Source information:
This 207-nucleotide RNA was probed chemically with 2A3. The data come from the RNA Mapping Database (RMDB), library RNAMAK. Values cover nucleotides 27 to 156.

RNA sequence: GGGAACGACUCGAGUAGAGUCGAAAACCAGUGUGAGUUCGCUCACACUGGAAAAAACCUUUGUGCGAUUGUCAGGCUAUAUAGGCCCAUUGGGCCUGAUAUAAGCCUUGGAUUUAUCGCACUCUGGUAAAAAGAUUGGUCGUUCGCGACCAAUCAAGGUGUUACUAGUCUUCGGACUAGUAACACCAAAAGAAACAACAACAACAAC
Reactivity to 2A3 in 0.01 (KOAc 150mM, MgCl2 10mM, bicine 150mM(pH8.5), 24C), signal-to-noise 1, nucleotides 027 to 156: c000c000a000g010u000g010u000g000a010g000u040u230c230g050c140u010c000a000c000a000c020u020g000g000a120a000a000a030a000a000c000c010u000u010u010g000u000g000c000g040a000u000u010g030u020c000a000g000g000c000u000a000u010a000u000a000g000g000c000c020c200a160u170u300g000g000g010c000c000u000g060a000u000a000u000a100a030g010c000c000u000u020g030g000a010u050u300u180a030u020c000g020c000a000c000u000c020u000g000g030u090a150a130a000a000a000g010a000u000u000g020g000u000c000g020u000u080c290g000c020g120a000c040c000a000a000u020c000a000a040